[RMDB]
RNA sequence: GGGAACGACUCGAGUAGAGUCGAAAAGAGGAUUCAACGAGCUUCGUAGCAACGAUAGCAACGUAGCUUUUGCUACGACCCUAGCUAUCGAGGGUAGCUACGUCCCAUGCUCGAGGGGAGAAUCCGACCAUAUCCUGCUGUUCGCAGCAGGAUAUGGAAAAGAAACAACAACAACAAC
Reactivity to DMS in 0.01 (KOAc 150mM, MgCl2 10mM, bicine 150mM(pH8.5), 24C), signal-to-noise 4, nucleotides 027 to 126: g010a230g000g020a020u000u000c010a110a200c030g020a050g020c020u000u010c020g010u000a020g010c010a140a160c040g010a010u000a010g000c000a120a190c020g000u000a010g000c000u020u010u000u020g030c000u000a010c000g000a100c130c150c160u010a110g020c030u000a000u000c000g000a080g010g010g010u000a070g000c010u010a010c000g000u000c120c080c130a070u010g010c010u000c000g000a100g020g010g010g010a190g000a020a000u000c000c000g010a180
Reactivity to 2A3 in 0.01 (KOAc 150mM, MgCl2 10mM, bicine 150mM(pH8.5), 24C), signal-to-noise 5, nucleotides 027 to 126: g160a040g010g000a010u010u020c040a100a050c040g010a000g000c010u070u060c020g010u000a000g000c030a060a070c010g000a000u010a000g000c020a030a040c010g020u000a000g010c010u160u180u220u300g000c000u010a000c000g200a210c050c000c010u050a040g000c010u010a010u020c010g010a100g060g130g070u120a040g010c010u010a010c010g030u080c020c030c020a030u120g000c000u010c020g030a080g040g080g000g000a120g010a000a010u000c000c000g000a000